[RMDB]
RNA sequence: GGGAACGACUCGAGUAGAGUCGAAAAGAUAUGGACUGGGCAACAGCCUAUGUUUCGGAAACGAAACUAGGACAUGCCUGGUCCUAAGUCAAAGUCUGUCCCUCUGGUUCGCCAGAGGGACAGACAAGUCUGAUGUAAGGUUCGCCUUACAUCAGACAAAAGAAACAACAACAACAAC
Reactivity to 2A3 in 0.01 (KOAc 150mM, MgCl2 10mM, bicine 150mM(pH8.5), 24C), signal-to-noise 3, nucleotides 027 to 126: g030a010u040a020u150g010g000a000c010u020g020g000g000c020a090a070c040a260g060c030c010u150a180u300g010u000u020u000c000g010g020a080a030a030c010g000a000a000a000c010u010a000g000g010a040c020a100u050g000c000c000u000g010g000u000c000c000u000a050a000g010u000c050a080a020a030g010u000c010u020g010u000c010c090c000u010c010u000g050g060u070u080c300g070c110c000a000g010a000g020g000g000a000c000a000g000a000c000a000a000
Reactivity to DMS in 0.01 (KOAc 150mM, MgCl2 10mM, bicine 150mM(pH8.5), 24C), signal-to-noise 2, nucleotides 027 to 126: g000a030u000a260u000g000g010a030c000u000g000g000g020c020a020a080c260a200g000c000c000u000a010u020g010u000u000u000c000g010g020a060a050a160c020g000a010a010a010c000u010a010g000g000a050c100a180u000g000c000c000u000g010g020u000c000c000u000a000a050g010u000c030a110a130a150g000u000c010u010g010u000c000c000c000u000c000u000g000g010u000u020c240g010c010c010a000g000a010g000g000g000a010c020a000g010a000c000a020a010
This 177-nucleotide RNA was probed chemically with 2A3 and DMS.
2A3 adducts were read by reverse transcription with SuperScript II with manganese.
The reactions ran in a buffer of 150 mM KOAc, 10 mM MgCl2 and 150 mM bicine (pH 8.5), at 24 C.
The DMS profile rests on 2,019 reads.